RNA sequence: GGGAACGACUCGAGUAGAGUCGAAAACAAACGCACCUGUCCUUGCUCAAGUGCUGGGAUUGUGUGCCAACGGCUAUGAUAGAUAUGAAUAGAGCACGAGAUAAUGUGCUUACAGAAAGUUGGUUGAGCUCGAAACUUAAUUCGUUAAGUUUCGAGCAAAAGAAACAACAACAACAAC
Reactivity to DMS in 0.01 (KOAc 150mM, MgCl2 10mM, bicine 150mM(pH8.5), 24C), signal-to-noise 1, nucleotides 027 to 126: c130a040a140a210c300g000c000a000c000c060u000g010u010c000c000u000u000g000c020u000c300a150a110g050u020g020c010u000g010g020g000a040u000u000g000u030g070u000g010c060c090a040a150c040g040g010c020u000a040u010g000a150u010a110g020a110u000a110u000g000a090a100u000a110g000a020g060c030a000c000g000a050g000a300u030a110a120u040g000u010g000c000u010u000a040c260a040g000a160a000a160g000u000u010g000g000u010u010g010a140
Reactivity to 2A3 in 0.01 (KOAc 150mM, MgCl2 10mM, bicine 150mM(pH8.5), 24C), signal-to-noise 3, nucleotides 027 to 126: c010a010a080a000c030g000c010a000c010c000u000g000u000c000c000u030u040g010c010u050c190a280a150g080u080g140c000u000g000g000g030a000u020u050g080u010g000u000g090c030c000a060a000c000g120g030c160u080a060u180g070a030u030a210g200a050u270a030u150g100a110a110u120a170g000a000g010c000a000c010g080a130g020a200u220a160a080u210g010u000g000c000u030u020a010c000a000g220a110a030a020g000u030u040g040g060u060u040g030a020

Structure probing data (DMS and 2A3) for a 177-nucleotide construct. The RNA was probed in 150 mM KOAc, 10 mM MgCl2 and 150 mM bicine (pH 8.5) at 24 C. DMS adducts were read by reverse transcription with MarathonRT. 2A3 adducts were read by reverse transcription with SuperScript II with manganese.